[RMDB]
The record gives the reactivity of an RNA of 177 nucleotides to DMS and 2A3.

RNA sequence: GGGAACGACUCGAGUAGAGUCGAAAAUAACACAUCAAGAAAACCUUUCAUCCAAAUUUCUGACCGUCGUGGAACUGGAGCUGGUUGGAAAGUGACAGCAACCGCAACGGCUUUCCAAAAUGAAGAAGAGGAUUAAAUAGUUCGCUAUUUAAUCCUCAAAAGAAACAACAACAACAAC
Reactivity to DMS in 0.01 (KOAc 150mM, MgCl2 10mM, bicine 150mM(pH8.5), 24C), signal-to-noise 2, nucleotides 027 to 126: u000a090a130c060a050c050a090u000c110a120a050g020a070a100a110a060c070c030u000u000u020c090a070u010c020c050a060a070a100u010u010u000c060u010g010a110c010c030g010u020c070g020u000g010g030a150a040c070u010g000g010a200g000c050u000g020g020u010u000g020g000a040a070a020g010u010g000a270c040a020g000c050a080a120c060c070g010c030a040a050c060g000g000c030u000u000u000c010c000a020a050a050a050u030g040a090a060g000a090a130
Reactivity to 2A3 in 0.01 (KOAc 150mM, MgCl2 10mM, bicine 150mM(pH8.5), 24C), signal-to-noise 2, nucleotides 027 to 126: u130a040a000c020a000c020a060u080c070a030a120g050a140a220a070a040c000c010u040u120u030c050a050u010c010c030a050a150a230u090u160u020c060u090g120a110c010c000g060u050c000g030u030g030g040a070a050c020u010g000g010a000g010c000u020g060g080u100u070g040g010a160a130a000g020u050g080a050c000a020g000c010a080a190c020c040g000c020a020a010c050g000g000c000u070u040u000c020c020a010a080a000a070u120g060a030a020g060a140a020
The 2A3 profile rests on 1,420 reads. Values cover nucleotides 27 to 126. 2A3 adducts were read by reverse transcription with SuperScript II with manganese. For DMS, 1,072 sequencing reads were counted.